This 177-nucleotide RNA was probed chemically with DMS. The RNA was probed in 150 mM KOAc, 10 mM MgCl2 and 150 mM bicine (pH 8.5) at 24 C.
RNA sequence: GGGAACGACUCGAGUAGAGUCGAAAAAAGAAGAAGAAUCCAAGAAGAUACUGAACAUGUACCUUCAAAUGUUCAAUCAACAACAGGUGGAUCAACACGGCCAUCAUCACCAACAUCCAUACGCCUAUAUACUGCCUGGAUUCGUCCAGGCAGUAUAAAAAGAAACAACAACAACAAC
Reactivity to DMS in 0.01 (KOAc 150mM, MgCl2 10mM, bicine 150mM(pH8.5), 24C), signal-to-noise 1, nucleotides 027 to 126: a080a100g020a040a100g000a050a130g000a130a080u000c050c010a060a140g010a010a050g030a050u000a030c060u000g030a080a100c150a040u000g000u000a110c090c080u000u010c110a050a080a050u000g010u000u000c030a140a070u000c060a040a060c030a050a020c060a100g020g010u030g000g000a050u000c050a040a040c160a040c150g010g010c010c010a000u010c020a030u030c090a080c050c050a000a050c100a030u000c010c020a050u000a060c120g000c080c000u000a100